Structure probing data (2A3) for a 207-nucleotide construct.
2A3 adducts were read by reverse transcription with SuperScript II with manganese.
RNA sequence: GGGAACGACUCGAGUAGAGUCGAAAAAGAUCGAUUACGAUCGAUCAAUGAUGCCCCUCACCCACCUCUGAAGAUCCCAGGUGGGCGAGGGAACGGAGCACGGGAUCACGAGCAGUACGCUGUUCGAAAAAGAACUAGACCUUCGGGUCUAGUUCAAGUCUCCUUUCUACUUCGGUAGAAAGGAGACAAAAGAAACAACAACAACAAC
Reactivity to 2A3 in 0.01 (KOAc 150mM, MgCl2 10mM, bicine 150mM(pH8.5), 24C), signal-to-noise 1, nucleotides 027 to 156: a000g000a000u000c000g000a010u040u070a090c190g060a030u010c000g000a000u000c000a000a080u210g050a040u290g080c000c000c000c000u000c000a010c000c000c000a000c000c000u020c080u090g130a100a030g000a030u000c000c000c000a010g000g000u000g000g000g000c000g010a010g000g000g040a020a060c130g070g090a100g110c120a050c080g010g000g000a010u050c030a010c020g020a000g000c020a000g000u040a010c200g030c110u010g000u000u000c000g020a050a000a000a000a010g000a000a000c000u000a000g000a000c010c010u030u100c290g080g000g000u000c000u000a000g000u000u000c000a000a000

Annotation
The reactions ran in a buffer of 150 mM KOAc, 10 mM MgCl2 and 150 mM bicine (pH 8.5), at 24 C.